[RMDB]
RNA sequence: GGGAACGACUCGAGUAGAGUCGAAAAGAUUAGUGAUGUGACGCGUGGGCCUGGGCUGACACACAGGGUCGGAAAGAGGUUUUGUAUCAAGUCCAUUUACAUUCUUGGUAAGAUCUGGCUGGAUGAACCAUAAGAAAGCGUUCGCGCUUUCUUAUGGAAAAGAAACAACAACAACAAC
Reactivity to DMS in 0.01 (KOAc 150mM, MgCl2 10mM, bicine 150mM(pH8.5), 24C), signal-to-noise 5, nucleotides 027 to 126: g010a070u030u020a070g010u000g010a040u000g010u030g020a090c080g010c140g000u030g010g020g010c030c030u010g010g000g010c030u010g010a080c180a040c090a090c110a100g000g000g010u000c040g010g010a050a060a070g010a100g000g000u010u000u010u020g000u020a060u010c030a030a060g000u010c040c080a080u020u000u020a090c100a080u010u020c030u010u020g000g000u030a050a100g010a040u010c030u000g000g000c030u010g000g000a090u000g000a080a150
Reactivity to 2A3 in 0.01 (KOAc 150mM, MgCl2 10mM, bicine 150mM(pH8.5), 24C), signal-to-noise 6, nucleotides 027 to 126: g100a070u150u230a050g050u040g070a090u070g060u070g020a020c030g030c050g040u100g010g020g030c020c030u030g010g010g050c040u040g040a020c020a010c010a010c020a090g070g000g040u040c030g040g050a080a080a020g080a040g020g060u000u060u080u150g090u030a060u070c040a060a020g040u000c040c040a050u060u050u080a070c050a080u090u080c020u070u070g040g010u040a040a070g010a080u000c010u020g050g000c010u030g020g030a030u050g030a050a060